[RMDB]
RNA sequence: GGGAACGACUCGAGUAGAGUCGAAAACGGACUGUAAGAUUACCUCCCCGCAGCACCUCUGCCACUUAGGCCUAUCUUCACAAUCCGAACCCCAACCUCUGAGGCACCCUGCCUACUCGACCCCUUCCCCACGGGGACUCCACUCUGGGAACGCGACGUAUAAGGAACCGUUCGCGGUUCCUUAUACAAAAGAAACAACAACAACAAC
Reactivity to 2A3 in 0.01 (KOAc 150mM, MgCl2 10mM, bicine 150mM(pH8.5), 24C), signal-to-noise 1, nucleotides 027 to 156: c020g020g000a000c050u070g040u060a040a000g010a110u000u210a120c000c010u050c020c070c030c070g010c040a060g010c040a060c020c050u170c040u050g020c000c000a120c070u040u100a050g040g000c000c040u080a050u020c010u020u000c070a020c000a040a030u010c020c020g020a050a090c000c000c010c000a030a040c030c020u020c060u090g030a050g000g050c040a020c000c010c020u050g030c010c010u030a040c010u020c010g070a070c000c010c010c000u030u070c000c000c000c000a010c000g000g020g000g030a010c020u000c020c000a080c010u070c040u050g020g010g030a000a080c000g010c020g070a060c050